Structure probing data (2A3 and DMS) for a 177-nucleotide construct. The reactions ran in a buffer of 150 mM KOAc, 10 mM MgCl2 and 150 mM bicine (pH 8.5), at 24 C. The 2A3 profile rests on 9,015 reads. 2A3 adducts were read by reverse transcription with SuperScript II with manganese. High 2A3 reactivity points to a flexible backbone, as in loops and unpaired stretches. For DMS the reverse transcriptase was MarathonRT. Source: RMDB library OK2TST, as collected in RNAgym.
[RMDB]
RNA sequence: GGGAACGACUCGAGUAGAGUCGAAAAGUGAACGCGGUGGGGGUGGAUGUCAACACCGCUUCGGUCUCGCUGCUGCGUUACGUCUCCGGCCUAUCGCAGAGUCUGGGUCAGAAUAUCGUGGAAUACCUAAUUAAAUGGCAUUCGUGCCAUUUAAUUAAAAAGAAACAACAACAACAAC
Reactivity to 2A3 in 0.01 (KOAc 150mM, MgCl2 10mM, bicine 150mM(pH8.5), 24C), signal-to-noise 2, nucleotides 027 to 126: g050u020g010a060a010c070g000c010g010g020u030g010g020g010g010g010u060g070g160a130u170g090u100c000a000a040c000a020c010c000g000c000u020u020c020g010g010u010c020u010c030g010c040u100g020c010u020g000c000g040u030u040a030c040g030u020c030u010c050c020g040g000c010c010u100a100u110c040g000c070a020g030a010g070u030c050u070g000g000g030u020c010a010g030a080a060u120a030u120c050g030u060g010g040a060a040u080a160c030c000
Reactivity to DMS in 0.01 (KOAc 150mM, MgCl2 10mM, bicine 150mM(pH8.5), 24C), signal-to-noise 9, nucleotides 027 to 126: g020u000g000a030a050c140g020c020g010g020u000g010g000g010g010g020u000g010g010a090u010g010u000c070a050a070c040a030c020c010g010c040u000u000c010g010g010u000c030u000c060g020c070u010g000c020u000g000c030g010u000u000a050c160g000u000c030u000c090c060g000g010c030c040u000a050u000c080g010c060a070g010a090g010u010c060u000g010g000g010u000c050a060g010a100a070u010a060u000c070g010u000g000g010a110a100u010a100c070c070